An RNA of 177 nucleotides, treated with 2A3 and DMS and read out base by base. For 2A3, 944 sequencing reads were counted. Values cover nucleotides 27 to 126.
[RMDB]
RNA sequence: GGGAACGACUCGAGUAGAGUCGAAAAGCAGAAUAUCGUGUGUGUAGUACGAAUGAAGGAUUACUAAAUAUUAAACGAACACGUUCUGAAUUAGUUGAAUCCGGUGAGCAAGAUUUGAAUGAUAUCACUUAGCUGACCUUUUCGAAGGUCAGCUAAGAAAAGAAACAACAACAACAAC
Reactivity to 2A3 in 0.01 (KOAc 150mM, MgCl2 10mM, bicine 150mM(pH8.5), 24C), signal-to-noise 3, nucleotides 027 to 126: g100c010a010g000a180a050u050a060u090c060g000u000g010u030g030u010g040u070a020g000u030a010c040g120a030a100u260g010a140a070g010g030a000u070u000a050c000u010a010a060a150u230a010u000u210a090a180a000c110g010a040a000c090a020c300g030u030u000c030u090g070a130a140u020u000a010g070u090u100g090a000a000u000c100c040g010g000u170g010a080g000c060a100a030g020a240u130u060u120g060a120a090u130g090a030u010a030u190c000a000
Reactivity to DMS in 0.01 (KOAc 150mM, MgCl2 10mM, bicine 150mM(pH8.5), 24C), signal-to-noise 2, nucleotides 027 to 126: g010c020a090g000a040a020u030a050u000c050g030u000g010u000g010u010g050u000a040g030u020a050c050g000a110a150u020g010a080a140g010g000a100u010u010a060c040u010a060a120a090u020a080u010u010a040a030a060c050g020a090a130c120a090c120g000u000u000c050u000g010a020a030u000u030a080g000u000u020g010a030a010u000c020c060g000g000u040g000a050g000c120a010a020g050a090u010u010u010g030a080a070u030g000a100u060a070u010c080a140